[RMDB]
Notes: Conditions: 150 mM KOAc, 10 mM MgCl2 and 150 mM bicine (pH 8.5), 24 C. The record gives the reactivity of an RNA of 207 nucleotides to 2A3.
RNA sequence: GGGAACGACUCGAGUAGAGUCGAAAACUUCUCAGAAUCCAGCGAGAGGCGUGGAGAGAGGGCCGCGGUGCUCUGGAGUAGAGGCUCUGCCUUCGAAACACCAUCGAUCGUCCCUUCUUCUUUACCUUCUUCUGGCUCUUCUUGGAGACGCGACCGGGGUGAUGAGAUAGUUCGCUAUCUCAUCACCAAAAGAAACAACAACAACAAC
Reactivity to 2A3 in 0.01 (KOAc 150mM, MgCl2 10mM, bicine 150mM(pH8.5), 24C), signal-to-noise 1, nucleotides 027 to 156: c020u030u030c030u000c000a030g050a060a060u300c000c000a100g010c090g050a000g010a000g010g000c190g020u010g030g000a010g000a010g010a020g020g000g000c000c020g080c020g040g000u000g000c000u000c010u020g000g000a000g000u010a000g000a000g010g000c050u060c140u300g050c030c000u140u140c000g000a000a000a000c000a010c090c000a010u000c000g010a300u020c010g010u030c000c000c000u020u080c030u080u000c010u010u010u020a000c000c010u000u000c000u040u000c000u000g000g010c000u030c000u020u050c000u000u050g020g010a020g010a030c010g080c100g110a040c010c010g070g000